An RNA of 207 nucleotides, treated with 2A3 and DMS and read out base by base. For DMS the reverse transcriptase was MarathonRT. For 2A3, 8,436 sequencing reads were counted. Values cover nucleotides 27 to 156. For DMS, 7,279 sequencing reads were counted. Conditions: 150 mM KOAc, 10 mM MgCl2 and 150 mM bicine (pH 8.5), 24 C.
RNA sequence: GGGAACGACUCGAGUAGAGUCGAAAAGGGUGCCUGGACCCGAGGUGGCGAGAUCUUCCCAGGACCGGCUCUGAGUAUCCCGUCCGUGGGAGCCUCAGGGACGUAGCAAAUCGCGGACUACGCACGUAGGGUCGAAGAGCGGACGGCUUUCGGACGCGUUACGAUUACUGUUCGCAGUAAUCGUAACAAAAGAAACAACAACAACAAC
Reactivity to 2A3 in 0.01 (KOAc 150mM, MgCl2 10mM, bicine 150mM(pH8.5), 24C), signal-to-noise 5, nucleotides 027 to 156: g010g000g010u020g020c000c010u020g030g020a030c010c000c030g000a070g020g070u090g020g040c030g020a060g060a160u060c040u110u080c040c000c000a020g010g040a010c030c020g010g010c000u000c010u010g000a010g000u030a060u040c000c000c010g040u080c060c050g050u220g000g000g000a000g000c000c010u000c000a010g000g000g010a010c010g020u060a040g000c040a020a070a090u100c070g000c030g020g010a020c040u120a050c080g030c040a020c080g050u090a070g010g000g050u020c020g010a050a010g030a000g010c010g010g060a030c040g020g010c000u040u100u110c050g020g010a040c040g010c040
Reactivity to DMS in 0.01 (KOAc 150mM, MgCl2 10mM, bicine 150mM(pH8.5), 24C), signal-to-noise 3, nucleotides 027 to 156: g000g020g020u000g010c010c020u000g020g000a090c010c000c020g010a130g000g010u000g030g040c020g030a110g010a090u010c050u000u000c010c010c000a210g020g000a100c240c020g000g010c030u000c000u010g000a060g030u000a080u000c010c000c000g010u000c040c120g020u010g010g010g020a040g010c050c010u010c020a040g000g000g010a030c010g040u010a090g060c070a050a070a080u010c020g000c020g000g000a080c030u000a080c040g000c030a050c070g020u000a170g020g050g010u000c010g000a120a100g000a140g030c030g020g000a100c040g000g000c030u010u000u000c020g010g020a100c120g020c160